[RMDB]
RNA sequence: GGGAACGACUCGAGUAGAGUCGAAAAUGUGGACGGGGGGCUUCCUGGAUGCCUACCCGCCCCUGAGUGGCUGCUGUUCCCCCAGAAGCGGGAGGCCUUCUGCCAGCUGUUGCAGCUCAUGAAGAACAAGCACUCCAAGCAGGACGAGCCCGACAUGCGUAAACACAAGAUUCGUCUUGUGUUUACGAAAAGAAACAACAACAACAAC
Reactivity to 2A3 in 0.01 (KOAc 150mM, MgCl2 10mM, bicine 150mM(pH8.5), 24C), signal-to-noise 2, nucleotides 027 to 156: u200g070u180g030g010a070c040g000g000g010g010g010g000c010u030u030c000c030u080g060g000a070u120g000c000c010u130a300c090c000c000g000c010c000c000c000u040g010a020g030u160g070g030c010u010g000c090u090g010u110u000c010c000c000c000c000a050g030a190a000g120c010g010g030g000a010g060g000c020c000u000u000c010u010g010c080c030a010g000c000u110g000u200u140g130c070a010g000c030u040c050a030u070g020a020a020g000a020a040c110a150a030g000c000a050c090u040c010c000a040a010g050c030a000g020g010a010c010g010a000g050c000c020c010g120a110c050a100u270g050
Reactivity to DMS in 0.01 (KOAc 150mM, MgCl2 10mM, bicine 150mM(pH8.5), 24C), signal-to-noise 2, nucleotides 027 to 156: u010g000u000g060g030a030c030g040g020g010g030g010g030c010u010u000c090c110u000g030g030a110u000g000c020c010u020a140c030c000c010g000c010c010c000c000u000g000a210g030u010g030g020c130u010g060c040u030g020u000u000c010c000c010c010c060a170g010a080a090g030c050g030g020g000a220g010g000c110c030u000u000c010u010g010c080c020a150g040c020u000g030u020u020g040c040a170g010c030u010c000a080u020g010a130a170g060a040a100c040a110a210g020c020a150c020u010c000c040a040a100g020c000a100g030g000a070c050g010a080g030c000c020c020g040a110c050a150u000g000
An RNA of 207 nucleotides, treated with 2A3 and DMS and read out base by base. Values cover nucleotides 27 to 156. Reactivities are rounded to 0.1 and cut off at 0 and 3. The RNA was probed in 150 mM KOAc, 10 mM MgCl2 and 150 mM bicine (pH 8.5) at 24 C. The DMS profile rests on 2,887 reads.